[RMDB]
RNA sequence: GGGAACGACUCGAGUAGAGUCGAAAACGGUCAAACGGAUCCCACUCUCAUCCCGUCCUAUCACUAUGGCUCCGCCAUCACCCCAAUGUUCCUGUCGGAGGGGAUCUUCACCAGAAAUCAACGCGCAUGCAUAGCUAGUCUUCGGACUAGCUAUGCAAAAAGAAACAACAACAACAAC
Reactivity to 2A3 in 0.01 (KOAc 150mM, MgCl2 10mM, bicine 150mM(pH8.5), 24C), signal-to-noise 4, nucleotides 027 to 126: c030g040g050u120c110a080a070a050c040g040g010a060u070c010c010c010a100c010u040c000u000c010a100u050c000c000c000g120u050c040c050u150a130u140c030a020c050u020a060u090g050g000c050u010c070c020g030c020c000a010u020c010a090c000c020c000c000a040a080u140g030u050u060c020c010u050g050u090c060g050g050a050g040g000g000g030a020u030c020u040u040c040a050c020c020a020g080a070a110a020u100c030a040a100c030g050c000g000c030a050
Reactivity to DMS in 0.01 (KOAc 150mM, MgCl2 10mM, bicine 150mM(pH8.5), 24C), signal-to-noise 2, nucleotides 027 to 126: c050g000g000u000c250a040a110a140c060g000g010a020u020c000c000c020a130c020u000c020u000c130a110u000c000c030c030g030u030c000c010u000a070u020c030a080c120u010a110u020g000g000c000u000c000c060g000c000c040a000u040c060a030c030c020c000c040a070a070u030g020u000u000c000c000u000g010u000c110g000g000a100g000g000g000g000a060u000c030u040u020c080a110c020c000a110g000a060a080a090u010c160a010a040c180g000c010g030c130a170
Notes: Conditions: 150 mM KOAc, 10 mM MgCl2 and 150 mM bicine (pH 8.5), 24 C. This 177-nucleotide RNA was probed chemically with 2A3 and DMS. 2A3 adducts were read by reverse transcription with SuperScript II with manganese.